[RMDB]
RNA sequence: GGGAACGACUCGAGUAGAGUCGAAAACGCCGAUCACGCGGGUGAUAACCUUUUUGCUGUAGCUGUCGGCCAACUGGCGCGCCUGUGACGCCAGGUAGGCGGCGUUACAGAUAUUGGGCGGCAUGUUGAUCUUUACCGGUUUCGACCGGUAAAGAUCAAAAGAAACAACAACAACAAC
Reactivity to 2A3 in 0.01 (KOAc 150mM, MgCl2 10mM, bicine 150mM(pH8.5), 24C), signal-to-noise 3, nucleotides 027 to 126: c050g010c010c000g010a010u020c020a010c050g300c150g110g090g040u040g000a050u110a120a090c020c030u060u040u000u060u290g120c000u000g010u000a020g010c130u130g040u030c040g140g090c000c000a030a020c000u010g000g000c020g010c000g030c050c110u130g050u160g040a070c000g000c000c000a010g000g010u080a030g010g010c000g000g000c010g010u000u000a000c000a000g010a000u050a030u020u040g000g000g000c000g000g000c050a070u090g140u010u010
An RNA of 177 nucleotides, treated with 2A3 and read out base by base. The RNA was probed in 150 mM KOAc, 10 mM MgCl2 and 150 mM bicine (pH 8.5) at 24 C.